[RMDB]
RNA sequence: GGGAACGACUCGAGUAGAGUCGAAAAGCGUGUCGUUAUAGCCGUGAUAAUGGCCACUGGUUUUCUUACGCUCCUUGCCAAUCGUCCCCGGCAUGAUGAUGGUGAUGUCGUACUGAUACUGGUCAGCACUACGGGACCAGUUCGCUGGUCCCGUAGUAAAAGAAACAACAACAACAAC
Reactivity to 2A3 in 0.01 (KOAc 150mM, MgCl2 10mM, bicine 150mM(pH8.5), 24C), signal-to-noise 3, nucleotides 027 to 126: g110c060g010u080g020u120c050g040u040u070a040u070a120g040c040c040g000u020g060a050u060a180a040u100g020g000c000c000a020c020u040g000g050u120u010u000u070c040u020u060a050c070g030c050u020c000c010u000u040g000c000c020a060a090u030c000g040u040c020c000c010c000g030g000c000a040u080g010a020u010g010a020u040g010g100u000g000a070u070g040u040c030g000u010a070c020u060g040a010u020a060c010u040g050g010u040c050a010g000c010
Reactivity to DMS in 0.01 (KOAc 150mM, MgCl2 10mM, bicine 150mM(pH8.5), 24C), signal-to-noise 1, nucleotides 027 to 126: g000c100g010u000g020u000c040g030u000u000a010u010a130g020c030c030g000u050g000a110u010a040a040u010g020g010c080c050a060c080u000g000g000u000u000u000u000c000u000u020a040c110g000c040u000c010c000u000u000g010c070c010a050a080u020c140g000u000c010c050c040c020g000g060c070a050u000g000a060u010g030a070u000g000g000u030g000a050u000g020u010c040g000u000a070c040u000g020a060u000a050c120u010g000g000u000c000a020g010c260